[RMDB]
RNA sequence: GGGAACGACUCGAGUAGAGUCGAAAAUUCGCGUGAUUCGUCACGCGAAGAUUACCGAGAACCGUGCUCGGUAUAAACAUGGAAGCCUUGGAAACAAGGGAAAUAGGCAGGCCUUCGGGCCUGCCAAGCUUACCAUCUUAUUCGUAAGAUGGUAAGCAAAAGAAACAACAACAACAAC
Reactivity to DMS in 0.01 (KOAc 150mM, MgCl2 10mM, bicine 150mM(pH8.5), 24C), signal-to-noise 4, nucleotides 027 to 126: u000u000c000g010c000g030u000g010a030u000u010c230g010u000c000a000c010g010c010g010a000a010g010a160u010u000a120c000c000g000a010g010a120a210c090c090g010u000g020c000u000c000g010g020u000a010u010a050a090a090c200a080u010g010g000a140a150g010c000c000u010u000g000g010a150a110a180c010a000a000g000g000g010a020a060a070u000a110g010g010c000a000g010g000c010c000u000u010c210g020g030g000c000c000u000g020c000c000a000a030
Reactivity to 2A3 in 0.01 (KOAc 150mM, MgCl2 10mM, bicine 150mM(pH8.5), 24C), signal-to-noise 3, nucleotides 027 to 126: u010u000c000g000c000g010u010g000a020u030u070c190g030u010c130a000c000g000c000g000a000a010g000a000u010u060a030c000c000g000a000g000a060a110c080c050g070u110g030c010u010c010g010g000u020a020u050a010a010a000c010a040u110g120g080a100a070g150c000c000u000u010g020g020a070a020a010c020a000a020g030g000g020a000a070a040u100a050g000g000c010a000g010g000c010c000u060u160c220g030g000g000c010c000u000g020c010c000a000a000
The record gives the reactivity of an RNA of 177 nucleotides to DMS and 2A3. It was measured as part of the RMDB library M2PK50. Conditions: 150 mM KOAc, 10 mM MgCl2 and 150 mM bicine (pH 8.5), 24 C. DMS adducts were read by reverse transcription with MarathonRT. For 2A3, 7,260 sequencing reads were counted. 2A3 adducts were read by reverse transcription with SuperScript II with manganese.